[RMDB]
RNA sequence: GGGAACGACUCGAGUAGAGUCGAAAAGAUAUGGACAGUCCCAUGUGGAGACUACACCUCGGAAACGAGGUUGAGUCGAUGAAACAUGGGAGCUGUCCUAAGUCAAACUUGCAGUUCGCUGCAAGAAGAGUGGAACUAAGUUCGCUUAGUUCCACUCAAAAGAAACAACAACAACAAC
Reactivity to 2A3 in 0.01 (KOAc 150mM, MgCl2 10mM, bicine 150mM(pH8.5), 24C), signal-to-noise 2, nucleotides 027 to 126: g010a010u050a020u170g000g010a000c000a000g020u040c000c000c010a010u010g000u010g010g030a030g010a030c000u140a150c110a000c000c000u020c000g020g040a090a080a050c000g030a000g000g030u030u110g000a000g000u010c010g040a120u020g000a040a050a000c000a000u000g000g000g000a040g000c000u010g000u040c010c000u010a010a010g000u000c020a030a070a130c000u010u010g000c000a020g020u100u090c260g090c180u020g000c020a000a010g010a040a030
Reactivity to DMS in 0.01 (KOAc 150mM, MgCl2 10mM, bicine 150mM(pH8.5), 24C), signal-to-noise 4, nucleotides 027 to 126: g020a040u000a300u010g010g010a010c000a000g010u000c000c000c000a000u000g010u000g030g000a070g010a020c000u000a070c100a030c000c000u000c000g010g000a140a140a300c010g030a010g010g010u000u020g010a060g010u000c010g010a130u020g020a180a170a010c000a000u010g000g000g000a030g010c010u000g000u000c000c000u000a010a080g010u000c040a130a120a270c020u010u010g000c010a000g000u000u000c300g020c010u000g000c000a010a020g000a070a140
Chemical mapping of a 177-nucleotide RNA with 2A3 and DMS. Reactivities are rounded to 0.1 and cut off at 0 and 3. For DMS the reverse transcriptase was MarathonRT. Source: RMDB library TTRDES, as collected in RNAgym. The RNA was probed in 150 mM KOAc, 10 mM MgCl2 and 150 mM bicine (pH 8.5) at 24 C.